[RMDB]
RNA sequence: GGGAACGACUCGAGUAGAGUCGAAAAUUUGGGCCAGGCACAGUGGUGCAUGCUUAUAGUCCCAGCUGCUUGGGAGGCUGAGUUGGGAAGAUCAUUUGAGCCCAGGAGAUCAGUGUUGGAGUGUGCUAUAAUCAUGCCUGUAAACAGCCACUGUACACCUAUCACCCAUAUUCGUAUGGGUGAUAGGAAAAGAAACAACAACAACAAC
Reactivity to 2A3 in 0.01 (KOAc 150mM, MgCl2 10mM, bicine 150mM(pH8.5), 24C), signal-to-noise 3, nucleotides 027 to 156: u130u060u040g020g020g000c050c010a040g090g000c030a020c000a040g020u020g010g000u050g020c000a010u020g000c010u030u000a000u010a020g070u070c010c000c000a000g000c000u050g000c000u050u050g020g130g030a080g010g030c030u070g050a030g040u080u040g020g020g010a030a020g040a060u120c080a110u090u090u170g050a020g010c010c000c010a000g010g030a010g000a040u120c070a040g020u030g080u220u160g020g050a100g020u090g040u160g030c010u030a000u020a050a010u010c000a000u040g020c020c050u230g130u220a060a090a020c050a020g010c000c010a000c000u010g000u000a040c020a020
Reactivity to DMS in 0.01 (KOAc 150mM, MgCl2 10mM, bicine 150mM(pH8.5), 24C), signal-to-noise 2, nucleotides 027 to 156: u010u000u030g020g050g030c040c000a150g000g040c030a030c040a070g010u020g010g040u000g040c030a030u010g000c080u000u000a080u000a040g010u010c010c010c000a070g020c010u000g010c070u020u000g030g000g010a100g000g010c010u000g010a050g000u000u010g000g000g020a070a070g010a060u000c050a090u020u000u010g000a020g020c060c010c030a100g020g010a120g010a060u010c070a120g010u000g020u000u000g020g000a150g030u010g010u000g010c040u000a060u000a050a100u010c060a060u000g010c010c100u000g020u000a070a080a080c110a140g000c030c000a070c010u010g040u000a050c030a190